Structure probing data (2A3) for a 207-nucleotide construct. The reactions ran in a buffer of 150 mM KOAc, 10 mM MgCl2 and 150 mM bicine (pH 8.5), at 24 C. For 2A3, 774 sequencing reads were counted.
[RMDB]
RNA sequence: GGGAACGACUCGAGUAGAGUCGAAAAGUUCAUCCCCUGAUCAAGGAUGCCCGAAACGGUAAGGCGGAAAGCAAAUUAAAUAACGUCAACCCAUCGGGACGGUUGGCCAGUUAAGAAGUGAGGAUUCAAAAGAUCGAACCGUUCGCGGUUCGAUCAAGAAUCUCUAACGCUUCGGCGUUAGAGAUUCAAAAGAAACAACAACAACAAC
Reactivity to 2A3 in 0.01 (KOAc 150mM, MgCl2 10mM, bicine 150mM(pH8.5), 24C), signal-to-noise 1, nucleotides 027 to 156: g050u050u010c010a070u100c000c020c000c000u040g010a040u010c010a000a050g030g000a100u070g000c000c050c000g000a060a050a020c040g000g000u060a080a010g010g030c020g000g000a050a060a000g150c120a070a020a170u200u200a070a070a060u150a080a020c000g010u000c000a020a020c000c000c000a040u020c000g030g010g000a010c000g020g040u020u000g010g000c010c010a010g010u050u060a100a090g070a020a000g080u040g070a050g010g040a020u070u000c020a070a000a000a100g000a020u000c000g000a000a000c000c020g100u020u060c150g010c020g080g000u000u000c000g000a000u010c000a000a000